RNA sequence: GGGAACGACUCGAGUAGAGUCGAAAACGGCGCCACCAGUGUGCCCGCCAGCAUGCACGAAUUGCUGCGCCCCGGCGUAUUGCUGAUGUCGGCGUCUUCGUCCGAUCGCGAGUUCGAUGCCGUCGCGGUCCGGCGUUUCGUUCGCGAAACGCCGGACAAAAGAAACAACAACAACAAC
Reactivity to 2A3 in 0.01 (KOAc 150mM, MgCl2 10mM, bicine 150mM(pH8.5), 24C), signal-to-noise 1, nucleotides 027 to 126: c040g010g040c000g000c000c000a040c040c000a010g050u040g060u040g060c000c000c000g010c000c020a000g030c000a060u120g090c080a020c300g280a190a250u150u020g000c000u000g010c020g000c040c020c000c060g030g000c180g000u120a090u220u280g140c040u020g000a270u180g060u110c050g000g040c020g000u040c000u060u040c000g060u020c000c010g010a040u080c020g000c000g000a000g120u170u240c040g060a040u150g170c000c000g050u010c020g040c130g090

This 177-nucleotide RNA was probed chemically with 2A3. Reactivities are rounded to 0.1 and cut off at 0 and 3. Conditions: 150 mM KOAc, 10 mM MgCl2 and 150 mM bicine (pH 8.5), 24 C.